[RMDB]
An RNA of 177 nucleotides, treated with 2A3 and DMS and read out base by base. 2A3 adducts were read by reverse transcription with SuperScript II with manganese. Conditions: 150 mM KOAc, 10 mM MgCl2 and 150 mM bicine (pH 8.5), 24 C. High DMS reactivity at an A or C suggests that its Watson-Crick edge is free.

RNA sequence: GGGAACGACUCGAGUAGAGUCGAAAACCACCGCAAUUCGUUGCGGUGGGAAGGUGCAAUUCGCUGUCUGCAGCACAGACGGCCAAUCCGUCAAAGCGAAAACUGGAGGGUCAUUCGUGACCCUCAAUCGUAGAGAAAGAUUCGUCUUUCUCUACGAAAAAGAAACAACAACAACAAC
Reactivity to 2A3 in 0.01 (KOAc 150mM, MgCl2 10mM, bicine 150mM(pH8.5), 24C), signal-to-noise 9, nucleotides 027 to 126: c000c000a000c000c000g010c000a010a040u070u060c200g060u120u020g000c000g000g000u000g000g000g000a040a070g100g010u060g010c040a100a180u050u020c020g000c020u020g050u090c050u100g070c050a090g020c030a020c000a070g010a000c010g010g000c040c040a040a060u070c010c010g030u030c040a070a040a020g030c020g050a020a020a020a080c110u170g140g000a000g010g010g000u000c010a010u060u090c160g090u030g000a000c000c000c000u000c000a000a000
Reactivity to DMS in 0.01 (KOAc 150mM, MgCl2 10mM, bicine 150mM(pH8.5), 24C), signal-to-noise 9, nucleotides 027 to 126: c000c000a010c000c000g020c000a010a020u000u010c180g020u000u000g020c000g000g020u000g000g000g000a030a030g010g020u000g010c040a100a110u000u000c070g010c010u000g000u000c040u000g010c060a190g030c100a300c040a130g000a020c010g000g000c110c160a080a100u010c020c010g000u000c040a070a090a070g010c030g000a020a030a100a100c200u010g010g010a010g010g000g010u000c000a040u000u010c180g010u000g000a010c000c000c000u000c000a000a030